[RMDB]
RNA sequence: GGGAACGACUCGAGUAGAGUCGAAAACCAUCCAGCGGUGGUGCCAUACCGUUUGACUUCACUAAGUUUGAUAAGACUAAAUGUCCUAUUCAAGCCGUGAUAGUCGUUCCUCGUGCUUAGUAACUAAGGAUGAAAUGCAUGUCUAAGACAGCAUCUUCGUUAAUGAAAGCUUCGGCUUUCAUUAACGAAAAGAAACAACAACAACAAC
Reactivity to 2A3 in 0.01 (KOAc 150mM, MgCl2 10mM, bicine 150mM(pH8.5), 24C), signal-to-noise 3, nucleotides 027 to 156: c010c000a030u080c020c020a000g030c010g010g010u060g000g060u160g070c050c030a090u090a050c020c020g010u020u060u110g020a040c030u000u020c010a030c010u050a100a030g010u000u000u000g030a000u020a030a030g000a000c020u070a000a110a220u300g000u000c010c010u030a120u120u070c000a010a010g000c010c000g020u010g010a020u080a030g000u010c000g000u010u000c000c010u000c020g020u050g040c000u000u030a040g030u140a150a170c050u010a040a060g090g070a100u080g020a080a110a040u060g000c070a100u040g000u020c050u080a060a100g030a020c010a000g000c010a070u060c050u030u010
Description: Conditions: 150 mM KOAc, 10 mM MgCl2 and 150 mM bicine (pH 8.5), 24 C. An RNA of 207 nucleotides, treated with 2A3 and read out base by base. For 2A3, 1,620 sequencing reads were counted.